[RMDB]
Source: RMDB library M2PK90, as collected in RNAgym. The record gives the reactivity of an RNA of 177 nucleotides to 2A3 and DMS. Values cover nucleotides 27 to 126. The RNA was probed in 150 mM KOAc, 10 mM MgCl2 and 150 mM bicine (pH 8.5) at 24 C. In probing experiments dimethyl sulfate is read out at A N1 and C N3, which are open when not base-paired. 2A3 adducts were read by reverse transcription with SuperScript II with manganese. For 2A3, 4,177 sequencing reads were counted.
RNA sequence: GGGAACGACUCGAGUAGAGUCGAAAAUAAUAUGCAUAUCGAGUUCCCAUGUAUUUUCGUAGCCCUGCGGCUGUAACAUUACAGCUUAGUAAGAAUGCUACCAAACGAUAGCUAGCCGCAGGAUUAAUAUCAGUGAGUUAUUCGUAACUCACUGAUAAAAAGAAACAACAACAACAAC
Reactivity to 2A3 in 0.01 (KOAc 150mM, MgCl2 10mM, bicine 150mM(pH8.5), 24C), signal-to-noise 3, nucleotides 027 to 126: u110a020a030u090a080u140g050c060a030u060a070u220c080g070a040g090u020u020c020c000c010a000u080g020u030a130u000u110u020u080c050g010u020a040g030c010c020c000u000g020c000g000g000c000u020g040u060a080a070c070a090u030u090a020c030a070g090c110u090u050a050g000u010a010a010g010a110a030u110g010c010u050a020c020c040a180a270a040c070g060a090u020a020g010c020u010a000g000c010c000g000c010a000g000g010a000u000u050a000a010
Reactivity to DMS in 0.01 (KOAc 150mM, MgCl2 10mM, bicine 150mM(pH8.5), 24C), signal-to-noise 6, nucleotides 027 to 126: u000a070a100u010a060u010g000c100a070u000a090u010c090g010a160g010u000u000c010c000c010a130u010g020u000a050u000u000u000u010c050g020u010a090g000c100c010c000u000g010c010g000g010c000u000g010u010a050a110c180a090u000u000a030c020a150g020c190u010u000a090g010u000a010a040g010a100a070u000g000c000u000a010c010c030a070a100a120c180g000a050u000a020g010c010u000a020g010c000c000g020c000a010g000g000a020u000u000a040a130